[RMDB]
RNA sequence: GGGAACGACUCGAGUAGAGUCGAAAAAGCCUUUUUGUGCGUUAGGCCUUUCAGCUUGAACAUGAGUGUAAGGGGUGGUGGGGUCGGAACAUGCCAUUGUGUUACGUAUCAUUACAUAUUAAGUGCCGAUUUAAGGCCGAUUCGUCGGCCUUAAAUCAAAAGAAACAACAACAACAAC
Reactivity to 2A3 in 0.01 (KOAc 150mM, MgCl2 10mM, bicine 150mM(pH8.5), 24C), signal-to-noise 2, nucleotides 027 to 126: a000g010c000c000u000u000u030u040u000g160u070g150c180g010u060u080a050g000g000c020c000u050u040u060c010a050g000c010u030u090g070a020a000c020a020u030g020a000g030u050g000u070a070a110g070g000g000g010u110g010g080u200g010g000g000g010u020c000g000g000a060a000c050a050u130g150c180c000a110u040u110g030u010g000u050u050a080c070g050u060a070u160c040a010u000u300a000c050a000u200a050u020u260a050a140g040u010g180c030c020
Reactivity to DMS in 0.01 (KOAc 150mM, MgCl2 10mM, bicine 150mM(pH8.5), 24C), signal-to-noise 1, nucleotides 027 to 126: a080g000c000c060u010u000u000u000u050g060u000g010c100g010u010u040a040g010g030c000c010u000u000u000c050a080g010c050u000u000g000a090a040c130a130u040g000a070g000u000g010u000a110a060g000g000g020g000u030g000g000u050g000g000g000g000u030c060g000g010a020a000c000a050u000g000c120c070a160u060u010g000u040g000u000u000a000c090g000u020a070u000c120a090u050u000a120c090a010u000a120u000u050a050a080g000u000g000c090c110
Chemical mapping of a 177-nucleotide RNA with 2A3 and DMS.
For 2A3, 695 sequencing reads were counted.
The RNA was probed in 150 mM KOAc, 10 mM MgCl2 and 150 mM bicine (pH 8.5) at 24 C.
In probing experiments dimethyl sulfate is read out at A N1 and C N3, which are open when not base-paired.